[RMDB]
RNA sequence: GGGAACGACUCGAGUAGAGUCGAAAAACACCACUCCACGCCAGCCUGAGUGACAGAGCAAUAUCUUGUCUCUAAAAUCAAUUAAAAUUCUACAUAGAACCGUAUGUUCCAGGAAUUCCACUUCUGGUGAUAAUGCCUACUUCGGUAGGCAUUAUCAAAAAGAAACAACAACAACAAC
Reactivity to DMS in 0.01 (KOAc 150mM, MgCl2 10mM, bicine 150mM(pH8.5), 24C), signal-to-noise 2, nucleotides 027 to 126: a100c100a120c030c010a110c060u020c050c070a040c100g010c060c010a050g010c050c010u000g000a070g030u000g010a060c060a100g000a070g000c010a060a050u010a080u010c040u000u000g010u000c000u000c030u020a090a090a040a090u010c090a060a060u000u010a020a060a080a100u000u000c020u000a070c040a040u010a090g000a020a060c090c270g010u010a050u010g000u000u000c010c000a000g030g000a040a070u000u000c040c020a030c120u000u000c070u000g010g010
Reactivity to 2A3 in 0.01 (KOAc 150mM, MgCl2 10mM, bicine 150mM(pH8.5), 24C), signal-to-noise 2, nucleotides 027 to 126: a000c070a050c030c030a100c040u020c090c020a020c020g050c010c020a040g000c030c020u080g040a040g040u060g050a020c010a000g080a010g000c030a080a030u060a080u230c040u030u090g020u000c000u000c000u050a120a090a040a090u080c020a020a060u060u100a070a080a050a100u080u050c040u040a010c000a030u110a030g050a030a030c020c060g080u160a020u230g070u060u000c000c010a010g000g080a040a050u050u050c010c020a080c030u050u000c010u070g010g000